Chemical mapping of a 177-nucleotide RNA with DMS and 2A3. The RNA was probed in 150 mM KOAc, 10 mM MgCl2 and 150 mM bicine (pH 8.5) at 24 C.
RNA sequence: GGGAACGACUCGAGUAGAGUCGAAAAGCUGACACCUUACAGGAAACUCCUGUUGUGCCUGAUACUGUUGAAGUCCCACCGCAAGUGGUGAAACUUCCGUCUGCACCUCAGACUAUCCAGCCCGAGGGAAAAACGUUAAGUUCGCUUAACGUUUUUCAAAAGAAACAACAACAACAAC
Reactivity to DMS in 0.01 (KOAc 150mM, MgCl2 10mM, bicine 150mM(pH8.5), 24C), signal-to-noise 5, nucleotides 027 to 126: g020c030u010g010a080c080a070c120c170u000u000a060c060a050g000g010a080a170a150c140u010c030c020u000g000u010u000g010u000g010c010c090u000g000a070u010a080c130u000g020u020u010g010a050a050g000u010c030c030c000a030c020c040g020c220a090a220g010u000g010g010u000g020a050a050a030c020u000u010c020c110g010u010c030u000g010c070a120c030c060u000c020a040g010a070c040u000a090u010c060c060a090g020c000c000c010g010a110g000g010
Reactivity to 2A3 in 0.01 (KOAc 150mM, MgCl2 10mM, bicine 150mM(pH8.5), 24C), signal-to-noise 5, nucleotides 027 to 126: g040c040u020g020a020c010a040c050c010u040u090a020c030a030g010g060a090a170a090c060u050c030c010u020g020u060u040g020u020g010c010c050u040g010a050u060a160c050u070g120u180u120g030a010a010g030u060c020c020c000a010c000c020g080c080a100a050g020u040g060g030u100g040a090a060a020c000u020u000c010c000g030u010c010u010g010c030a040c010c000u020c010a000g000a050c020u040a050u050c020c020a010g040c020c010c000g030a070g060g040